Overview: The data come from the RNA Mapping Database (RMDB), library OK3TST. Chemical mapping of a 207-nucleotide RNA with DMS and 2A3.
RNA sequence: GGGAACGACUCGAGUAGAGUCGAAAAGGCAGCCCUCAGCAGCCACAGGCCUUCCAGGAGCUGUUAUCACUACCAGUUUCUGGCACAAUUCCAGCACAAUUAUGACAAUUCAGAGAAGCAAGUCAAAGGACUGGGCACCUGCCUCUGACAGACACCAAUCCAUUAAUGGGUUCGCCCAUUAAUGGAUAAAAGAAACAACAACAACAAC
Reactivity to DMS in 0.01 (KOAc 150mM, MgCl2 10mM, bicine 150mM(pH8.5), 24C), signal-to-noise 2, nucleotides 027 to 156: g000g030c040a080g040c040c060c030u000c070a100g000c040a080g050c020c040a150c050a080g020g000c050c010u010u000c030c000a180g000g000a090g020c010u000g020u010u000a110u000c040a160c060u000a100c210c000a050g030u010u000u000c040u010g020g000c070a100c060a050a110u020u000c090c030a250g020c060a110c130a010a090u000u000a090u000g000a050c140a050a100u000u000c070a100g030a170g010a100a080g000c040a070a120g030u000c050a070a100a160g030g020a060c030u000g000g010g040c030a070c030c030u010g040c000c030u000c060u000g000a100c080a110g000a080c060a080c010c020a080
Reactivity to 2A3 in 0.01 (KOAc 150mM, MgCl2 10mM, bicine 150mM(pH8.5), 24C), signal-to-noise 4, nucleotides 027 to 156: g030g000c020a010g040c030c030c000u070c040a100g010c020a020g020c030c030a130c040a070g050g030c020c000u060u000c020c000a000g010g000a010g000c010u010g010u100u090a160u220c110a080c180u110a050c050c000a000g000u020u000u000c000u020g020g010c040a010c010a060a100u090u000c040c040a030g060c040a030c050a120a070u150u110a100u250g050a030c020a050a060u080u080c020a090g050a020g040a180a020g050c080a090a050g030u070c050a110a050a020g050g020a030c020u030g000g010g000c020a040c000c010u010g020c020c000u000c010u030g070a060c020a060g040a020c020a010c060c030a020
For 2A3, 2,654 sequencing reads were counted.
For DMS, 2,625 sequencing reads were counted.
Conditions: 150 mM KOAc, 10 mM MgCl2 and 150 mM bicine (pH 8.5), 24 C.